[RMDB]
This 170-nucleotide RNA was probed chemically with DMS and 2A3. In probing experiments dimethyl sulfate is read out at A N1 and C N3, which are open when not base-paired. Reactivities are given for positions 27 through 129. It was measured as part of the RMDB library 15KLIB. The reactions ran in a buffer of 150 mM KOAc, 10 mM MgCl2 and 150 mM bicine (pH 8.5), at 24 C. The DMS profile rests on 88,292 reads.
RNA sequence: GGGAACGACUCGAGUAGAGUCGAAAACACAAUGGUAUCAUGAGCAUGUUGGUGGUGUCUAUGACAACUCUAUCACAUGCCCAUUGACAGUUGCAGUAAUUGCUGGAGUUGCUGGUGCUCGCAUUCCGAAACUCUUAGUUCGCUAAGAGUAAAAGAAACAACAACAACAAC
Reactivity to DMS in 0.01 (KOAc 150mM, MgCl2 10mM, bicine 150mM(pH8.5), 24C), signal-to-noise 9, nucleotides 027 to 129: c090a160c120a030a040u050g010g010u020a140u030c060a050u010g020a130g020c000a020u000g000u030u050g050g030u000g000g000u020g020u020c050u020a170u070g030a050c160a090a060c060u000c020u030a020u030c050a030c030a000u000g000c030c000c000a000u010u000g020a000c100a150g000u000u020g010c050a040g000u040a070a080u040u010g010c040u030g000g000a030g000u000u030g020c030u020g000g000u000g030c070u000c120g000c100a120u020u020c020c000g030a150a100
Reactivity to 2A3 in 0.01 (KOAc 150mM, MgCl2 10mM, bicine 150mM(pH8.5), 24C), signal-to-noise 9, nucleotides 027 to 129: c060a000c020a010a050u080g040g030u160a070u210c050a050u080g030a020g030c010a010u010g020u070u150g150g000u020g020g000u000g010u010c070u130a230u290g050a030c030a030a070c050u010c010u080a020u020c010a000c010a010u020g000c000c000c000a030u020u080g050a030c040a050g050u080u040g040c030a020g020u150a130a140u130u090g010c020u060g020g020a060g040u090u110g030c070u030g020g050u050g010c010u020c030g040c040a040u070u010c020c000g030a130a090